[RMDB]
RNA sequence: GGGAACGACUCGAGUAGAGUCGAAAACUCGCCUCUGCUGGCCUCCUGAGACCAAGCUUAGCUGUCACCAUGGCCGGGCCCUUCACUGCUCAAACAUGAGAGUAGAGUGUGGCCAGCGGCAGGAGCCGAUCGUUACCCGAUUCGUCGGGUAACGAUCAAAAGAAACAACAACAACAAC
Reactivity to 2A3 in 0.01 (KOAc 150mM, MgCl2 10mM, bicine 150mM(pH8.5), 24C), signal-to-noise 2, nucleotides 027 to 126: c000u010c000g050c010c000u010c000u020g040c010u020g000g000c010c000u040c020c020u030g090a120g100a300c050c080a080a000g000c000u000u060a020g020c040u050g060u170c060a040c110c060a150u120g000g010c000c000g030g030g020c030c000c000u130u080c000a010c020u020g030c000u010c000a140a210a150c070a180u280g070a080g010a000g190u020a030g020a100g000u250g040u020g000g000c020c010a000g000c010g000g000c020a000g040g010a020g070c060c070
Reactivity to DMS in 0.01 (KOAc 150mM, MgCl2 10mM, bicine 150mM(pH8.5), 24C), signal-to-noise 1, nucleotides 027 to 126: c010u000c040g020c030c000u000c060u000g020c080u000g000g000c030c020u010c030c030u000g010a150g020a060c150c140a070a130g010c040u000u000a110g000c060u010g000u000c110a110c180c170a060u000g030g050c000c030g000g000g000c010c050c010u000u000c030a160c000u000g000c010u000c000a080a060a140c300a170u000g010a160g000a060g010u010a070g010a120g010u040g000u010g010g010c000c030a020g010c000g020g040c130a110g070g010a160g040c130c050

Conditions: 150 mM KOAc, 10 mM MgCl2 and 150 mM bicine (pH 8.5), 24 C. Structure probing data (2A3 and DMS) for a 177-nucleotide construct. For 2A3, 1,238 sequencing reads were counted. Values are in units of 0.01, from 0 to 300, in steps of 10. For DMS the reverse transcriptase was MarathonRT.